Structure probing data (2A3 and DMS) for a 177-nucleotide construct. For 2A3 the reverse transcriptase was SuperScript II with manganese.
RNA sequence: GGGAACGACUCGAGUAGAGUCGAAAAGAGCGUCGAGAGACGAAGAGAAGUGCAUAGAUCCACAACGGAGAACGUAAUAAUGCACUCAUGUGGGUUAGUGUCCGGAACAACGGGCACAAGAGGCAGAACGCAUGCUAGUCUUCGGACUAGCAUGCGUAAAAGAAACAACAACAACAAC
Reactivity to 2A3 in 0.01 (KOAc 150mM, MgCl2 10mM, bicine 150mM(pH8.5), 24C), signal-to-noise 1, nucleotides 027 to 126: g000a010g050c000g000u030c010g080a000g000a130g000a020c100g000a060a060g260a000g000a150a000g030u030g060c070a040u110a000g110a010u000c000c000a000c270a150a030c170g060g090a070g000a020a080c020g150u060a030a030u120a020a210u060g100c000a000c000u000c000a110u100g160u070g020g060g030u170u130a060g000u000g000u000c000c000g000g130a080a110c150a070a000c080g000g000g000c000a000c000a000a010g000a060g010g000c000a000g090a000
Reactivity to DMS in 0.01 (KOAc 150mM, MgCl2 10mM, bicine 150mM(pH8.5), 24C), signal-to-noise 2, nucleotides 027 to 126: g000a110g030c000g000u000c010g000a170g020a130g000a000c010g030a100a090g020a110g010a040a100g000u010g030c000a000u000a090g000a260u000c020c010a020c210a030a160c160g000g000a080g040a160a220c220g020u000a100a100u030a070a050u000g000c030a010c000u010c020a150u000g010u040g000g000g010u000u000a090g000u000g080u000c000c030g000g010a060a060c300a170a050c000g000g000g000c000a000c000a040a050g000a070g000g000c090a100g010a130
The DMS profile rests on 1,690 reads. The RNA was probed in 150 mM KOAc, 10 mM MgCl2 and 150 mM bicine (pH 8.5) at 24 C. For DMS the reverse transcriptase was MarathonRT. The 2A3 profile rests on 828 reads.